[RMDB]
RNA sequence: GGGAACGACUCGAGUAGAGUCGAAAAACGCUUCACAAUGUGCGGCAAAGAAACAUUGUUUAUGCAAAGGCACUUCGCAAUGUGUGCUCACACAUUGCUUAUUCAAACACGCUUCACAAUGUGCGACAAAACUUCACGGUCUUCGGACCGUGAAGAAUCUGUAAAGCGAGUUCGCUCGCUUUACAGAAAAAGAAACAACAACAACAAC
Reactivity to 2A3 in 0.01 (KOAc 150mM, MgCl2 10mM, bicine 150mM(pH8.5), 24C), signal-to-noise 4, nucleotides 027 to 156: a000c020g000c000u030u020c010a000c000a000a060u020g010u000g010c010g060g020c120a130a080a030g090a020a090a000c010a010u000u000g100u060u080u080a130u130g030c040a040a090a080g110g000c010a030c030u100u060c090g000c020a020a010u000g020u000g020u030g070c070u110c080a010c000a000c000a010u010u010g010c000u040u040a060u050u100c030a010a070a050c070a030c100g080c060u100u120c040a030c040a150a140u170g020u030g030c010g060a030c070a010a100a020a040c000u000u000c000a010c000g000g010u000c000u020u080c090g080g000a000c000c000g000u000g000a000a000g000a000a010
Reactivity to DMS in 0.01 (KOAc 150mM, MgCl2 10mM, bicine 150mM(pH8.5), 24C), signal-to-noise 1, nucleotides 027 to 156: a010c050g000c010u020u000c020a050c010a000a000u010g020u000g020c010g030g050c030a110a060a060g050a100a060a010c010a010u000u000g080u000u050u000a070u030g000c060a080a110a080g030g010c020a040c070u000u000c130g000c040a070a030u010g000u000g030u000g010c160u000c080a140c020a000c000a030u010u000g000c010u000u000a030u000u010c090a050a070a110c090a130c120g000c030u000u010c090a050c060a100a110u000g000u000g030c010g000a140c170a030a020a110a080c010u010u000c000a010c000g050g010u000c020u000u010c300g050g010a030c010c010g040u000g000a000a010g000a040a010
The data come from the RNA Mapping Database (RMDB), library M2RFPK. This 207-nucleotide RNA was probed chemically with 2A3 and DMS. Values cover nucleotides 27 to 156. The RNA was probed in 150 mM KOAc, 10 mM MgCl2 and 150 mM bicine (pH 8.5) at 24 C.